An RNA of 177 nucleotides, treated with 2A3 and DMS and read out base by base. The data come from the RNA Mapping Database (RMDB), library TTRDEL. The RNA was probed in 150 mM KOAc, 10 mM MgCl2 and 150 mM bicine (pH 8.5) at 24 C. The DMS profile rests on 4,290 reads. For 2A3 the reverse transcriptase was SuperScript II with manganese.
RNA sequence: GGGAACGACUCGAGUAGAGUCGAAAAGAUAUGGAAAUGCCACGACCAGCAACAGCUCGGAAACGAGACAUGCUGGUGGUCAUUUCCUAAGUCGUGGCACCUUGAACGCUUCGGCGUUCAAGGUGAAUCAUGAGAUGUCGUUCGCGACAUCUCAUGAAAAAGAAACAACAACAACAAC
Reactivity to 2A3 in 0.01 (KOAc 150mM, MgCl2 10mM, bicine 150mM(pH8.5), 24C), signal-to-noise 3, nucleotides 027 to 126: g020a000u050a040u110g000g010a020a030a000u010g040c090c040a050c070g270a080c030c010a010g020c000a020a110c040a230g060c010u000c000g030g020a040a060a070c020g000a010g050a060c010a020u090g000c000u000g020g020u000g000g020u060c000a020u010u020u010c000c000u010a100a040g030u020c030g030u110g140g090c000a000c000c000u010u010g010a010a000c000g000c000u110u090c300g160g010c020g000u010u000c000a000a010g000g010u000g000a000a040
Reactivity to DMS in 0.01 (KOAc 150mM, MgCl2 10mM, bicine 150mM(pH8.5), 24C), signal-to-noise 4, nucleotides 027 to 126: g010a050u000a300u010g010g010a010a010a010u010g000c080c180a070c070g010a080c060c000a010g000c000a030a100c300a160g000c010u000c000g000g000a100a090a190c010g000a010g010a040c110a150u000g010c000u000g010g010u000g000g010u000c000a000u010u010u000c000c000u000a020a090g010u000c020g000u000g010g000c000a020c000c000u000u000g000a010a010c000g010c000u010u030c170g020g020c010g000u000u000c000a000a000g000g010u000g000a020a070